[RMDB]
RNA sequence: GGGAACGACUCGAGUAGAGUCGAAAACGUGGUGUACUCCAUGCCGUCCAGAUAGGCGUGCUUUCUCGGACCCGGGGCCCCGGUGGAGGAGCUGGAGCACUUGGCGGCGCGAGAGAAGUUGGAGGCCAUGGCGGAAGAUAGACGCUCAGCGUUGCGGCUAUGGAACAAUUUUCGAAUUGUUCCAUAGAAAAGAAACAACAACAACAAC
Reactivity to 2A3 in 0.01 (KOAc 150mM, MgCl2 10mM, bicine 150mM(pH8.5), 24C), signal-to-noise 1, nucleotides 027 to 156: c040g000u030g040g030u080g000u080a040c010u000c010c010a040u080g050c000c010g010u050c010c010a010g050a180u100a110g220g000c070g030u100g050c010u030u120u160c010u000c000g050g060a070c040c010c000g140g010g000g000c180c200c040c000g000g000u050g080g010a030g020g020a020g010c000u020g040g180a050g030c030a050c060u020u050g030g000c000g000g000c030g000c020g010a050g000a000g000a060a050g050u100u080g000g000a000g010g050c030c000a040u050g000g020c040g060g010a000a070g020a070u140a040g070a080c030g000c040u080c050a020g010c040g030u030u020g090c020g050g050
The record gives the reactivity of an RNA of 207 nucleotides to 2A3. Reactivities are given for positions 27 through 156. Conditions: 150 mM KOAc, 10 mM MgCl2 and 150 mM bicine (pH 8.5), 24 C.